[RMDB]
The record gives the reactivity of an RNA of 177 nucleotides to DMS and 2A3. DMS (dimethyl sulfate) methylates the pairing face of unpaired adenines and cytosines. The reactions ran in a buffer of 150 mM KOAc, 10 mM MgCl2 and 150 mM bicine (pH 8.5), at 24 C. It was measured as part of the RMDB library M2PK90. Reactivities are rounded to 0.1 and cut off at 0 and 3. For DMS, 2,413 sequencing reads were counted. Reactivities are given for positions 27 through 126. For DMS the reverse transcriptase was MarathonRT.

RNA sequence: GGGAACGACUCGAGUAGAGUCGAAAAUGAUUGAGCGUAGCACACACUCAGACUGUACGACAGUCUGACACACACCUACGCUAGUGCAUCGUCUGUGUGAUAUCGAUGUAGCACGAAAAUGAAGUAAGGAUUCUGCAUAAUUCGUUAUGCAGAAUCCAAAAGAAACAACAACAACAAC
Reactivity to DMS in 0.01 (KOAc 150mM, MgCl2 10mM, bicine 150mM(pH8.5), 24C), signal-to-noise 4, nucleotides 027 to 126: u010g010a130u020u010g030a040g010c000g000u000a010g030c050a100c150a170c120a090c250u000c000a010g010a030c000u000g010u010a140c280g020a110c030a010g010u000c000u000g000a020c070a030c140a200c110a050c300c010u020a020c010g020c010u000a070g000u000g010c010a140u000c030g020u000c030u010g040u000g000u000g020a130u000a110u010c070g010a020u000g010u000a300g000c020a010c020g010a030a040a040a090u000g010a060a080g000u000a060a160
Reactivity to 2A3 in 0.01 (KOAc 150mM, MgCl2 10mM, bicine 150mM(pH8.5), 24C), signal-to-noise 3, nucleotides 027 to 126: u270g040a100u080u200g050a030g000c000g010u010a020g000c200a010c020a000c000a010c070u010c010a000g000a000c000u010g040u140a130c120g120a030c250a010g000u010c000u000g020a000c010a010c010a000c000a000c030c000u000a000c000g000c010u010a020g030u000g010c000a050u010c020g040u000c040u080g120u020g080u050g160a110u060a030u240c020g000a010u010g010u050a060g030c010a010c020g060a080a020a020a070u150g060a090a020g070u100a100a050